[RMDB]
RNA sequence: GGGAACGACUCGAGUAGAGUCGAAAAUGAGAGGCCCCGUAACUCCUUUGCCAACUCAAUUAGUGCAUCCUCAUGCGACAAUACUUCAAUGUCACUCUUCUUGAAACGAUAAGCAGCGAGGGUACGGCUAUCGAGUGAGCUUCGGCUCACUCGAUAGAAAAGAAACAACAACAACAAC
Reactivity to DMS in 0.01 (KOAc 150mM, MgCl2 10mM, bicine 150mM(pH8.5), 24C), signal-to-noise 1, nucleotides 027 to 126: u000g000a110g010a200g000g050c020c030c000c030g000u020a060a120c020u010c000c010u000u000u000g020c030c010a180a120c160u030c100a100a140u030u020a020g040u000g000c050a010u000c010c020u020c030a070u010g040c010g000a040c050a100a020u010a170c060u020u020c060a040a020u020g010u000c090a060c150u000c080u000u060c040u000u000g000a110a100a040c130g000a060u000a040a150g000c040a030g020c080g010a020g000g000g050u010a020c110g000g000
An RNA of 177 nucleotides, treated with DMS and read out base by base. For DMS, 586 sequencing reads were counted. The data come from the RNA Mapping Database (RMDB), library OK2TST.